[RMDB]
RNA sequence: GGGAACGACUCGAGUAGAGUCGAAAAUCAAAGAGCGUCGCACACACGCAGACUAAGUCUGCUGCAUGCAGAGCCUAAACCGCUGGCUCUGUGUGCGAGAUAUCGUUCAAAAUGCAUGCAGAAAAAAGAUUGAUUCCUUCUUCGGAAGGAAUCAAUCAAAAGAAACAACAACAACAAC
Reactivity to 2A3 in 0.01 (KOAc 150mM, MgCl2 10mM, bicine 150mM(pH8.5), 24C), signal-to-noise 2, nucleotides 027 to 126: u120c050a060a140a020g070a020g000c010g050u000c000g000c020a000c000a000c000a000c010g010c010a010g000a020c050u210a210a080g030u000c010u000g020c030u010g010c000a000u000g000c000a000g000a000g010c000c000u070a130a100a070c100c050g080c160u030g000g010c000u010c000u000g000u000g000u000g000c040g000a000g000a020u220a050u230c010g020u080u000c040a050a030a050a050u050g000c000a010u020g000c000a030g060a050a090a000a000a000a000
Reactivity to DMS in 0.01 (KOAc 150mM, MgCl2 10mM, bicine 150mM(pH8.5), 24C), signal-to-noise 2, nucleotides 027 to 126: u000c090a090a170a170g000a030g000c000g040u000c000g000c000a010c000a010c020a060c170g000c000a010g000a010c010u000a170a150g000u010c000u000g010c000u000g000c000a020u000g000c000a000g010a010g000c010c000u000a020a060a240c150c120g000c260u000g000g000c000u000c000u000g010u000g020u000g030c020g000a000g010a090u030a080u010c030g000u000u000c050a030a030a080a050u010g000c020a000u000g020c030a100g010a000a080a070a110a060a060
The record gives the reactivity of an RNA of 177 nucleotides to 2A3 and DMS.
The DMS profile rests on 1,143 reads.